[RMDB]
RNA sequence: GGGAACGACUCGAGUAGAGUCGAAAAACUGAAAUGAAUGGGAUCAAAGAGCCAUUGAGAACUGUGGAAUGUUUGGUGGAUUGUAAAAGAAAUUUCAACUUGCUCAAGGCAAGGGCAGAGAAUAAAGAAUGAAUUGGAAGAAAUAAGCUGACUACAAGCUAGGUAAGGAUUUCGAUCCUUACCUAGCAAAAGAAACAACAACAACAAC
Reactivity to 2A3 in 0.01 (KOAc 150mM, MgCl2 10mM, bicine 150mM(pH8.5), 24C), signal-to-noise 3, nucleotides 027 to 156: a000c040u050g000a020a010a050u070g040a010a030u020g020g020g010a040u090c130a140a010a020g050a020g020c050c010a050u040u110g040a080g020a070a010c020u040g020u050g040g040a040a070u050g030u070u070u080g000g000u010g000g010a050u070u070g040u140a030a070a010a000g130a050a050a030u060u120u060c060a070a040c030u010u030g010c000u040c130a060a020g050g000c010a030a000g020g020g000c030a000g020a000g050a070a040u170a100a100a010g050a010a050u040g020a010a040u060u090g040g020a010a010g020a010a110a030u110a090a040g020c000u010g060a050c000u110a060c070a080a000
Reactivity to DMS in 0.01 (KOAc 150mM, MgCl2 10mM, bicine 150mM(pH8.5), 24C), signal-to-noise 2, nucleotides 027 to 156: a100c000u000g000a140a050a030u000g010a120a080u000g000g030g010a100u010c020a040a060a070g000a160g000c030c010a080u030u000g000a150g010a020a080c060u010g060u000g000g020a080a060u000g010u000u000u010g010g020u000g040g020a090u000u000g000u000a070a030a060a230g030a030a030a190u010u010u010c040a050a080c030u010u000g000c030u000c050a110a110g040g040c010a030a060g000g000g020c020a030g000a080g000a080a120u010a060a070a050g040a070a070u000g000a090a090u000u010g000g020a040a030g030a090a070a040u000a060a030g020c010u000g000a090c020u010a070c070a040a280